[RMDB]
RNA sequence: GGGAACGACUCGAGUAGAGUCGAAAAUUCGACGGGAGCAUCGCCCUUGCGGACGGUAUCGCCAUCCCUUCCACUCCGGUGCGGGUGACGUUCGAGGAGGGGUAUGUCGUCUCGGUGGAAGGGGAAGCGCGUGGAUAAAAUUCGUUUUAUCCACGCGAAAAGAAACAACAACAACAAC
Reactivity to DMS in 0.01 (KOAc 150mM, MgCl2 10mM, bicine 150mM(pH8.5), 24C), signal-to-noise 2, nucleotides 027 to 126: u000u010c030g020a080c140g000g000g010a130g020c050a050u010c020g000c020c010c000u000u000g010c050g020g000a050c030g000g000u010a060u010c050g040c030c090a170u000c000c000c010u010u000c000c000a060c010u000c100c060g000g000u000g010c070g040g010g000u000g000a020c030g020u000u000c020g030a080g030g000a080g000g000g020g010u010a020u000g030u000c020g000u000c010u000c020g010g020u000g010g020a020a010g000g000g010g020a070a130g010
Reactivity to 2A3 in 0.01 (KOAc 150mM, MgCl2 10mM, bicine 150mM(pH8.5), 24C), signal-to-noise 2, nucleotides 027 to 126: u100u040c040g040a030c080g040g000g020a040g080c020a060u030c010g010c010c010c000u050u110g130c040g030g000a050c010g070g120u110a070u160c050g030c060c000a110u200c050c000c000u020u010c010c000a010c020u060c080c060g060g000u050g010c030g000g040g000u100g210a220c000g020u050u040c030g020a050g050g090a070g000g060g000g010u080a020u070g030u010c010g010u020c010u020c030g000g000u000g010g000a000a010g000g000g000g000a020a020g050
An RNA of 177 nucleotides, treated with DMS and 2A3 and read out base by base. Source: RMDB library OK2TRN, as collected in RNAgym. The reactions ran in a buffer of 150 mM KOAc, 10 mM MgCl2 and 150 mM bicine (pH 8.5), at 24 C. The DMS profile rests on 2,349 reads. For DMS the reverse transcriptase was MarathonRT.